An RNA of 177 nucleotides, treated with 2A3 and DMS and read out base by base. Values cover nucleotides 27 to 126. For DMS the reverse transcriptase was MarathonRT.

RNA sequence: GGGAACGACUCGAGUAGAGUCGAAAAGAUAUGGAUGGUGUUGGGAGCUAUGUCGGAAACGAUGCAUAGCAUCGAUCAAUUAUCCAUCCUAAGUCAAAACGAGGUUGGAGUUCGCUCCAACCUCGAACUUACCUUUUAGGUUCGCCUAAAAGGUAAGAAAAGAAACAACAACAACAAC
Reactivity to 2A3 in 0.01 (KOAc 150mM, MgCl2 10mM, bicine 150mM(pH8.5), 24C), signal-to-noise 7, nucleotides 027 to 126: g030a020u060a030u140g010g000a000u000g000g030u030g010u040u020g050g090g010a040g000c000u010a010u010g040u090c030g040g050a060a060a040c030g030a050u300g080c030a010u010a010g000c030a110u270c030g060a100u060c000a020a020u160u210a050u160c010c000a000u000c000c000u010a090a020g050u040c020a000a020a100a140c030g000a000g010g000u000u000g000g000a000g010u090u140c200g130c120u000c000c000a000a000c000c000u000c000g000a000a000
Reactivity to DMS in 0.01 (KOAc 150mM, MgCl2 10mM, bicine 150mM(pH8.5), 24C), signal-to-noise 8, nucleotides 027 to 126: g000a040u000a300u010g000g000a020u000g000g020u000g020u000u000g000g010g000a060g020c000u000a010u000g020u000c020g000g010a090a080a140c010g020a090u010g010c030a020u000a010g010c000a220u000c150g010a070u000c000a010a020u010u000a090u000c000c000a010u000c000c000u000a030a100g010u000c040a050a040a110a210c020g000a010g000g010u000u000g000g000a020g020u000u010c260g010c010u000c000c000a000a010c000c000u000c000g000a010a050